[RMDB]
RNA sequence: GGGAACGACUCGAGUAGAGUCGAAAAGAUCAGUGGACCGGUGUAGUGCUUCUUGACGAAUGCGAUGGGUCGAACGAACCUUAGGGUUCCGUCGAAUUCGUACUGAGCAACCUCUGUGCCCGGACGAUACCGGUCGAACCUGACCCAUCCUUCCGGGCUCGUGGAUAUUAUUCGUAAUAUCCACGAGAAAAGAAACAACAACAACAAC
Reactivity to DMS in 0.01 (KOAc 150mM, MgCl2 10mM, bicine 150mM(pH8.5), 24C), signal-to-noise 1, nucleotides 027 to 156: g010a070u000c000a070g050u000g000g020a040c000c020g000g020u000g000u000a080g010u000g020c050u000u000c070u010u000g020a070c010g030a010a000u010g020c050g020a040u020g030g030g020u000c120g040a050a160c090g010a050a020c010c010u000u000a300g060g040g020u000u000c000c010g060u000c000g010a050a090u000u000c010g040u000a110c030u010g000a050g000c000a040a070c090c030u020c050u010g040u000g010c010c000c020g040g010a060c070g010a160u000a040c010c000g000g020u000c030g010a000a100c140c000u010g030a090c020c010c030a130u020c090c060u000u000c010c020g010g000g000
Reactivity to 2A3 in 0.01 (KOAc 150mM, MgCl2 10mM, bicine 150mM(pH8.5), 24C), signal-to-noise 4, nucleotides 027 to 156: g040a090u100c020a000g050u190g070g040a010c010c010g010g040u050g040u120a150g040u050g050c010u050u110c040u100u130g060a020c030g010a020a000u040g020c020g010a000u040g050g060g170u190c110g050a100a060c080g020a000a020c020c000u090u090a220g080g050g000u100u040c020c000g000u010c000g020a010a030u010u010c000g000u030a210c020u040g010a010g010c020a020a160c030c080u070c060u100g010u070g030c020c000c000g020g000a000c020g000a020u070a080c000c000g000g040u000c010g010a010a020c000c000u020g030a050c000c000c000a030u080c030c050u090u020c000c000g000g000g000